[RMDB]
RNA sequence: GGGAACGACUCGAGUAGAGUCGAAAAUACGGUACCUUUGUCCACCAUCUCCUCCAAUUCAUGCUCUAUUUUGUCAUUAACUUUAAUGUAUGAAAACAGUACGCCACAUGCUUCCAUGACAGUGUGUAACACUUUGGAUACAAAAUGUUUGACAUUACGUAGUAUGGAUUUUCGAAUCCAUACUACGAAAAGAAACAACAACAACAAC
Reactivity to 2A3 in 0.01 (KOAc 150mM, MgCl2 10mM, bicine 150mM(pH8.5), 24C), signal-to-noise 7, nucleotides 027 to 156: u160a010c040g020g020u100a070c020c000u050u050u140g050u010c020c010a040c020c020a150u050c050u010c040c010u000c020c010a040a020u060u050c010a030u090g020c000u000c010u090a100u090u100u050u050g070u020c030a050u050u150a100a080c050u120u080u140a160a060u120g040u050a030u050g080a070a030a020a000c030a020g060u070a020c060g020c020c000a040c010a030u060g010c030u100u010c050c020a050u060g050a060c030a060g020u020g000u000g050u110a100a010c030a000c030u060u080u060g080g020a040u050a100c040a020a090a010a070u060g030u000u030u050g030a030c020a020u010u060a020
Reactivity to DMS in 0.01 (KOAc 150mM, MgCl2 10mM, bicine 150mM(pH8.5), 24C), signal-to-noise 3, nucleotides 027 to 156: u000a060c020g020g020u000a090c020c030u000u010u000g010u000c020c020a060c040c010a130u010c040u000c020c020u010c020c030a050a190u000u000c040a100u000g020c040u010c050u000a120u000u000u000u010g010u000c020a060u000u000a020a150c130u000u000u010a070a090u010g010u020a060u000g010a070a060a040a080c080a060g030u000a060c070g020c030c000a040c050a090u000g010c030u000u010c020c080a140u010g030a080c050a070g020u000g000u000g030u010a060a080c020a040c040u010u000u000g030g010a230u000a090c040a050a030a060a060u000g010u000u010u000g030a080c030a060u010u000a170
Chemical mapping of a 207-nucleotide RNA with 2A3 and DMS. Conditions: 150 mM KOAc, 10 mM MgCl2 and 150 mM bicine (pH 8.5), 24 C. The DMS profile rests on 8,243 reads. Reactivities are rounded to 0.1 and cut off at 0 and 3.